This 207-nucleotide RNA was probed chemically with DMS and 2A3. It was measured as part of the RMDB library RFM130. DMS adducts were read by reverse transcription with MarathonRT. The reactions ran in a buffer of 150 mM KOAc, 10 mM MgCl2 and 150 mM bicine (pH 8.5), at 24 C.
RNA sequence: GGGAACGACUCGAGUAGAGUCGAAAAACUGGAGGACUAAGAAGGCUGAGUCUGAUGAAGUAAGACUUUGCUGAUACAUUCCUCCUAGAAAAAAGGGUUGGAGAGAGCAGCCUUCACUGAAGAGUAUCACAGGGCUGACUGUACUACCCAACACUCACCUAUAGGUUUGGUUCGCCAAACCUAUAGGAAAAGAAACAACAACAACAAC
Reactivity to DMS in 0.01 (KOAc 150mM, MgCl2 10mM, bicine 150mM(pH8.5), 24C), signal-to-noise 2, nucleotides 027 to 156: a130c100u020g020g040a100g010g020a130c140u020a100a200g030a180a300g010g000c030u000g000a040g020u000c000u000g000a230u000g010a190a260g000u000a190a090g020a020c010u020u000u000g000c010u000g020a140u010a120c090a200u000u010c010c000u000c020c000u020a100g000a030a100a040a110a140a020g000g000g000u000u000g010g000a110g000a140g010a150g030c010a050g000c010c020u000u000c020a110c030u000g000a090a230g010a270g000u010a110u000c110a100c070a020g010g020g000c030u020g000a060c020u000g000u010a090c010u010a030c000c020c000a100a110c030a030c000u020c040a300
Reactivity to 2A3 in 0.01 (KOAc 150mM, MgCl2 10mM, bicine 150mM(pH8.5), 24C), signal-to-noise 4, nucleotides 027 to 156: a010c040u020g000g010a010g000g020a010c070u090a080a110g040a070a020g080g000c010u020g000a000g000u000c010u010g070a130u180g140a150a100g080u120a040a000g010a000c000u000u020u020g010c010u030g000a030u040a140c030a040u030u010c000c000u000c000c000u010a040g040a000a120a000a010a010a000g020g000g000u020u010g030g010a060g000a010g010a010g070c000a000g010c000c000u030u020c040a040c020u010g010a060a040g100a100g260u160a050u160c020a040c060a040g020g000g000c000u000g020a070c010u010g040u080a040c010u060a050c000c000c000a010a000c000a020c030u060c030a030